About this RNA:
Chemical mapping of a 207-nucleotide RNA with DMS and 2A3. Conditions: 150 mM KOAc, 10 mM MgCl2 and 150 mM bicine (pH 8.5), 24 C. For 2A3 the reverse transcriptase was SuperScript II with manganese. DMS adducts were read by reverse transcription with MarathonRT.
RNA sequence: GGGAACGACUCGAGUAGAGUCGAAAAACGAGUCGUACGCGACUCGAAGGGUAUUGUCGGCGUAAAAGAACAAGACGUCACCGGACGCGACCGGGCUAAAAAGCGAAACGUCAUCUACGGAUGACGAAAAACGGACCUGGGUUCGCCCAGGUCCGAAGUAUUAUGUGUACUUCGGUACACAUAAUACAAAAGAAACAACAACAACAAC
Reactivity to DMS in 0.01 (KOAc 150mM, MgCl2 10mM, bicine 150mM(pH8.5), 24C), signal-to-noise 2, nucleotides 027 to 156: a140c010g000a030g030u000c000g020u010a130c230g060c000g010a030c000u010c010g010a050a020g010g020g020u000a010u020u010g020u000c010g030g000c020g000u020a080a050a130a140g000a110a120c070a140a130g010a130c030g000u010c010a130c000c040g000g000a100c080g010c080g000a160c030c030g000g000g090c020u000a020a020a040a080a090g030c020g020a110a100a140c020g010u000c000a040u000c000u000a160c220g080g010a080u010g010a010c030g010a000a000a040a030a150c000g030g000a040c010c010u030g010g000g010u000u000c190g030c020c000c000a010g000g010u040c020c000g010a000a030
Reactivity to 2A3 in 0.01 (KOAc 150mM, MgCl2 10mM, bicine 150mM(pH8.5), 24C), signal-to-noise 5, nucleotides 027 to 156: a020c010g000a000g000u010c010g010u050a030c200g000c010g110a010c000u000c000g010a010a020g100g030g010u180a130u150u190g090u120c060g000g020c020g020u050a030a050a080a110g100a130a050c070a100a030g110a040c010g010u010c010a000c010c000g000g010a020c010g000c000g010a010c000c000g010g010g010c060u070a000a050a000a000a000g000c000g020a080a040a010c010g000u000c000a000u000c010u020a010c160g110g000a000u000g000a000c000g020a050a010a000a010a000c010g000g000a000c000c000u000g000g000g070u030u050c140g070c020c000c000a000g000g000u000c000c000g000a000a000
Source: RMDB library M2RFPK, as collected in RNAgym. Values cover nucleotides 27 to 156.